Structure probing data (DMS and 2A3) for a 177-nucleotide construct.
Values cover nucleotides 27 to 126.
The RNA was probed in 150 mM KOAc, 10 mM MgCl2 and 150 mM bicine (pH 8.5) at 24 C.

RNA sequence: GGGAACGACUCGAGUAGAGUCGAAAAACACUAUAUGGAUACGUCCAUAUAGUGAAACUGACUUUGAGUCUCUCCUCAGGGUGCUGCAGGCAAAGCUGGGGACCCAGGGAGAGACGUAAGUGAGGAACAUAGUUCAAAUAUUCGUAUUUGAACUAUGAAAAGAAACAACAACAACAAC
Reactivity to DMS in 0.01 (KOAc 150mM, MgCl2 10mM, bicine 150mM(pH8.5), 24C), signal-to-noise 9, nucleotides 027 to 126: a120c000a000c000u000a000u000a000u000g000g000a030u000a060c230g020u000c000c000a000u000a000u000a010g010u000g000a020a050a100c020u000g000a020c010u000u000u010g010a100g010u000c000u000c000u000c000c000u000c070a120g010g000g010u000g000c000u000g000c010a010g000g020c090a110a090a140g000c010u000g000g000g000g000a010c000c000c000a300g000g000g000a010g010a010g000a000c000g000u000a000a000g010u000g000a050g000g010a100a240
Reactivity to 2A3 in 0.01 (KOAc 150mM, MgCl2 10mM, bicine 150mM(pH8.5), 24C), signal-to-noise 9, nucleotides 027 to 126: a000c000a000c000u000a000u000a000u000g010g000a010u020a050c200g100u010c000c000a000u000a000u000a000g000u000g000a020a000a000c000u030g060a000c010u030u030u120g240a060g010u000c000u000c000u000c010c010u070c120a190g010g020g010u110g170c010u100g200c010a030g080g000c090a170a080a080g070c010u010g000g000g000g090a000c000c000c000a000g010g000g000a010g000a000g000a000c000g000u000a000a000g000u000g100a030g030g050a060a030